Structure probing data (2A3 and DMS) for a 207-nucleotide construct. For 2A3, 2,278 sequencing reads were counted. Conditions: 150 mM KOAc, 10 mM MgCl2 and 150 mM bicine (pH 8.5), 24 C. The data come from the RNA Mapping Database (RMDB), library OK3TST.
RNA sequence: GGGAACGACUCGAGUAGAGUCGAAAACAGCAUCCUUGCUCCAGUCUCUUUUGUGGUGCUGGCUUCUGGCCAGCAGAAAUUCUGGGAAGUUCUAGACGUAGUGCCAGAGGCACAGUGGCCUUAGAAACCCUUGUAAAAUCACCGUCUACCCACGCGAUAUGAUACUGAGUUUCGACUCAGUAUCAUAAAAAGAAACAACAACAACAAC
Reactivity to 2A3 in 0.01 (KOAc 150mM, MgCl2 10mM, bicine 150mM(pH8.5), 24C), signal-to-noise 3, nucleotides 027 to 156: c050a000g040c010a040u050c030c040u040u090g030c010u010c010c010a050g040u000c000u000c000u100u100u120u210g120u100g030g050u050g000c010u020g000g000c010u100u070c060u090g030g000c010c010a010g000c020a000g050a020a070a030u130u040c050u040g000g060g040a090a040g070u090u060c050u080a050g030a090c030g070u070a050g010u100g120c010c030a020g000a070g070g020c030a030c000a160g020u060g100g020c020c010u020u050a040g060a080a090a060c000c000c000u010u040g060u100a090a100a020a040u060c020a050c040c000g040u020c020u040a080c010c010c020a020c030g070c020g070a040
Reactivity to DMS in 0.01 (KOAc 150mM, MgCl2 10mM, bicine 150mM(pH8.5), 24C), signal-to-noise 2, nucleotides 027 to 156: c060a100g010c040a070u010c040c070u000u000g000c040u010c040c050a170g010u000c010u000c010u000u010u000u000g010u000g030g030u010g050c010u010g010g010c030u000u000c190u000g030g030c000c020a140g060c030a020g010a080a070a100u010u000c020u000g000g020g020a170a180g020u010u000c040u000a000g000a100c070g000u000a100g060u010g020c000c020a190g020a130g030g010c010a060c020a110g030u000g030g050c020c020u020u010a120g010a070a080a100c050c000c030u000u020g030u020a030a030a050a150u000c020a070c020c010g010u000c010u000a080c020c000c000a110c060g020c070g000a250